[RMDB]
Conditions: 150 mM KOAc, 10 mM MgCl2 and 150 mM bicine (pH 8.5), 24 C. Chemical mapping of a 207-nucleotide RNA with DMS and 2A3. Source: RMDB library OK3TST, as collected in RNAgym.
RNA sequence: GGGAACGACUCGAGUAGAGUCGAAAAUGUUUUAUUAGACACUACUUUCAAAGGCUUUACAGCACUGGGUAUGUGUUCUACCUUUUUCUUUCAUUUUAUCCUCCACAACAGUUCUGUGAUGAAAGUACUAUUAUUAACUUCAUAGUUUACACGACAACGUAGUGAUACUAUUCGUAGUAUCACUACGAAAAGAAACAACAACAACAAC
Reactivity to DMS in 0.01 (KOAc 150mM, MgCl2 10mM, bicine 150mM(pH8.5), 24C), signal-to-noise 3, nucleotides 027 to 156: u000g010u000u000u010u000a090u010u000a130g010a070c020a090c030u010a050c020u040u010u010c070a120a050a080g000g000c010u010u000u000a160c150a100g000c010a080c030u000g020g020g030u000a020u000g040u000g020u000u000c040u000a050c080c020u030u000u000u000u000c020u020u010u020c020a090u000u000u000u030a140u010c030c020u000c030c060a090c060a070a120c080a110g010u000u000c050u000g030u000g010a090u000g010a050a040a050g000u000a060c090u000a080u000u000a100u000u010a050a090c030u000u010c070a060u000a050g020u000u000u000a090c070a140c080g030a130c050a080a210
Reactivity to 2A3 in 0.01 (KOAc 150mM, MgCl2 10mM, bicine 150mM(pH8.5), 24C), signal-to-noise 7, nucleotides 027 to 156: u020g020u010u100u080u110a160u060u060a010g010a000c010a000c010u010a010c000u030u130u270c100a210a290a060g040g000c040u140u190u250a120c160a040g010c000a010c020u020g010g000g020u040a060u240g000u020g040u070u000c010u020a030c000c010u030u140u020u100u080c030u050u070u030c020a040u020u040u030u100a100u080c020c020u040c040c040a080c010a140a060c010a060g040u150u060c040u080g010u040g030a070u040g020a070a050a050g030u030a020c010u010a010u130u010a050u070u060a130a050c120u040u040c030a020u010a030g020u020u090u110a080c160a020c040g180a020c050a090a010
Source information:
DMS adducts were read by reverse transcription with MarathonRT.